[RMDB]
Record summary: Structure probing data (DMS and 2A3) for a 177-nucleotide construct. High DMS reactivity at an A or C suggests that its Watson-Crick edge is free. DMS adducts were read by reverse transcription with MarathonRT. The data come from the RNA Mapping Database (RMDB), library OK2TRN.

RNA sequence: GGGAACGACUCGAGUAGAGUCGAAAAUCUCCGUGGAGACAUUGUGACCAACAGAGCUGCCAAGGCUCAUGCAGCCUUCAACGGACGAUCCGACGUGACUGUGGAGGACAUCGGCCGCGUGGUGAACGGCAUGGAUGGAAUUCGUUCCAUCCAUGCCAAAAGAAACAACAACAACAAC
Reactivity to DMS in 0.01 (KOAc 150mM, MgCl2 10mM, bicine 150mM(pH8.5), 24C), signal-to-noise 2, nucleotides 027 to 126: u000c010u000c000c070g020u000g020g000a070g000a020c050a080u000u000g070u040g000a100c030c130a080a180c130a070g000a120g000c070u000g010c050c060a030a110g000g000c000u000c060a090u000g030c070a070g000c010c010u000u000c100a060a060c120g010g000a030c040g000a080u010c100c060g030a050c070g030u000g000a060c050u020g000u010g040g000a120g000g000a110c100a050u000c090g000g000c030c010g000c130g000u000g020g050u000g000a100a070c100
Reactivity to 2A3 in 0.01 (KOAc 150mM, MgCl2 10mM, bicine 150mM(pH8.5), 24C), signal-to-noise 1, nucleotides 027 to 126: u030c000u000c010c030g050u120g050g020a090g010a040c050a130u110u120g090u090g130a110c050c000a010a060c030a060g060a010g040c020u050g060c010c020a100a050g010g030c020u000c090a020u100g010c010a000g020c000c000u050u040c040a090a030c010g000g010a030c050g080a090u080c020c040g040a050c010g040u030g000a070c010u070g050u020g030g070a050g000g040a030c020a080u090c000g040g000c050c010g000c010g000u040g000g040u080g070a070a020c070